The record gives the reactivity of an RNA of 207 nucleotides to 2A3.
RNA sequence: GGGAACGACUCGAGUAGAGUCGAAAACGAUCUGUUCGCAGAUCGAGCUACGGAGACGUAGCAAAGCGAGCGAGGGCACGGGCGCUCGCACUACCGGAAUUACAGCCAUAUCCACGUGUGCUAGGAUAUGGCCGUGCCCAAAGAAACAGCACACGAAGGUAUACUCACGUUUCGACGUGAGUAUACCAAAAGAAACAACAACAACAAC
Reactivity to 2A3 in 0.01 (KOAc 150mM, MgCl2 10mM, bicine 150mM(pH8.5), 24C), signal-to-noise 2, nucleotides 027 to 156: c000g000a000u000c000u010g030u050u130c190g020c120a000g000a010u000c000g000a040g000c000u000a000c000g080g020a050g000a060c010g010u000a000g010c010a040a080a000g000c010g010a000g000c000g020a060g020g000g020c000a000c020g120g050g000c010g040c010u000c000g000c010a010c010u040a030c000c010g080g100a120a150u190u060a170c030a020g020c000c000a000u000a000u020c000c010a060c140g000u010g000u000g000c010u010a010g000g000a000u000a000u010g000g000c000c000g000u000g000c000c000c000a060a080a010g080a020a130a010c050a020g000c000a010c010a000c010g020a170a080